[RMDB]
An RNA of 207 nucleotides, treated with DMS and 2A3 and read out base by base. For DMS the reverse transcriptase was MarathonRT. As a SHAPE reagent, 2A3 marks flexible, mostly unpaired nucleotides at the ribose 2'-OH. It was measured as part of the RMDB library M2RFPK. Conditions: 150 mM KOAc, 10 mM MgCl2 and 150 mM bicine (pH 8.5), 24 C.
RNA sequence: GGGAACGACUCGAGUAGAGUCGAAAAACGCUUCACAAUGUGCGGCAAAGAAACAUUGUUUAUGCAAAGGCACUUCGCAAUGUGUGCUCAAACAUUGCUUAUUCAAACACGCUUCACAAUGUGCCACAAAACUUCACGGUCUUCGGACCGUGAAGAACAAUCAUUAUACGUUCGCGUAUAAUGAUUGAAAAGAAACAACAACAACAAC
Reactivity to DMS in 0.01 (KOAc 150mM, MgCl2 10mM, bicine 150mM(pH8.5), 24C), signal-to-noise 5, nucleotides 027 to 156: a050c000g030c010u000u000c040a060c010a030a010u010g060u010g040c010g000g000c030a110a130a080g030a070a020a030c010a030u000u000g020u000u000u000a090u020g010c050a090a130a110g010g020c010a020c010u000u000c080g010c050a060a060u000g030u000g010u000g010c060u000c110a100a130a080c040a050u000u000g010c060u000u000a080u020u000c060a100a080a080c040a050c040g010c020u000u000c100a080c060a040a070u000g010u000g020c000c010a120c080a030a050a080a100c000u000u000c010a020c010g020g010u000c000u000u000c300g050g010a020c000c000g030u000g000a000a010g010a050a090
Reactivity to 2A3 in 0.01 (KOAc 150mM, MgCl2 10mM, bicine 150mM(pH8.5), 24C), signal-to-noise 9, nucleotides 027 to 156: a000c010g000c010u010u010c010a000c000a000a010u010g000u000g000c010g050g030c130a150a100a070g090a030a060a000c010a010u010u000g100u050u090u110a110u130g050c050a040a070a090g040g000c010a000c010u080u070c090g000c010a010a020u010g020u010g050u060g070c060u080c130a070a090a010c010a010u010u020g000c000u070u090a140u110u140c070a020a110a050c060a030c120g100c070u130u140c080a030c040a140a140u120g000u010g020c010c000a060c040a020a100a020a030c000u000u000c000a000c000g000g000u000c000u030u080c120g100g000a000c000c000g000u000g000a000a000g000a000a000